About this RNA: Chemical mapping of a 177-nucleotide RNA with DMS and 2A3. Values cover nucleotides 27 to 126. For DMS the reverse transcriptase was MarathonRT.
RNA sequence: GGGAACGACUCGAGUAGAGUCGAAAACACUACGGCCCGCUCCAGAGCGAGGAGGCGAUACGGUAUGCCCGUGACAUACUCGCGUUCGUCGGUAAAGCGAUGGCCCUCGAAGGAUGAGGUGGACCGGGUUUCACUUUCCAUUCGUGGAAAGUGAAACAAAAGAAACAACAACAACAAC
Reactivity to DMS in 0.01 (KOAc 150mM, MgCl2 10mM, bicine 150mM(pH8.5), 24C), signal-to-noise 3, nucleotides 027 to 126: c120a130c090u010a110c080g010g000c010c010c010g010c040u000c020c020a220g000a130g000c020g000a030g000g000a110g040g000c030g020a110u010a040c090g010g000u010a050u000g000c040c030c170g000u000g010a100c070a030u000a060c030u010c010g010c020g010u010u000c010g010u000c050g010g000u000a090a120a140g010c040g010a080u000g000g000c040c000c010u000c010g000a060a090g000g000a170u010g000a060g010g030u010g020g000a040c040c010g010g000
Reactivity to 2A3 in 0.01 (KOAc 150mM, MgCl2 10mM, bicine 150mM(pH8.5), 24C), signal-to-noise 4, nucleotides 027 to 126: c040a020c040u170a050c020g010g000c010c000c000g000c020u000c010c010a040g000a050g080c020g010a020g020g000a060g020g060c020g030a050u060a190c030g000g040u050a040u140g060c020c070c060g060u090g020a010c010a050u090a030c020u020c080g010c010g040u090u080c010g030u010c010g000g070u120a110a070a020g120c010g040a050u060g040g000c000c010c000u000c010g050a080a070g080g030a110u130g020a020g020g090u050g030g000a040c020c020g020g020
The reactions ran in a buffer of 150 mM KOAc, 10 mM MgCl2 and 150 mM bicine (pH 8.5), at 24 C. 2A3 is a SHAPE reagent: it acylates the 2'-hydroxyl of flexible nucleotides of all four kinds.